An RNA of 177 nucleotides, treated with DMS and read out base by base.

RNA sequence: GGGAACGACUCGAGUAGAGUCGAAAAGAUGGACGUCGCUUUGGGGGUUGCGGUCACGGAUCGGGUCGCGCGUCUGGCGCUGGUCGACUCGGCUGCGCCCGGCACCGUGAUCGACCAGUUCGUGCUCUGCCGGAAUAGGAUUCGUCCUAUUCCGGCAAAAAGAAACAACAACAACAAC
Reactivity to DMS in 0.01 (KOAc 150mM, MgCl2 10mM, bicine 150mM(pH8.5), 24C), signal-to-noise 2, nucleotides 027 to 126: g000a090u010g000g010a060c070g030u000c070g010c060u010u010u000g010g010g010g010g020u010u000g010c060g030g010u010c030a070c040g010g000a110u000c040g010g000g010u010c060g000c040g030c110g010u010c050u000g020g000c030g010c050u000g010g010u010c010g000a090c070u000c010g020g010c200u000g020c010g020c030c040c010g000g000c090a030c030c030g000u000g000a070u000c030g000a020c070c020a080g000u000u010c020g030u000g000c040u000c060

Values cover nucleotides 27 to 126.
DMS adducts were read by reverse transcription with MarathonRT.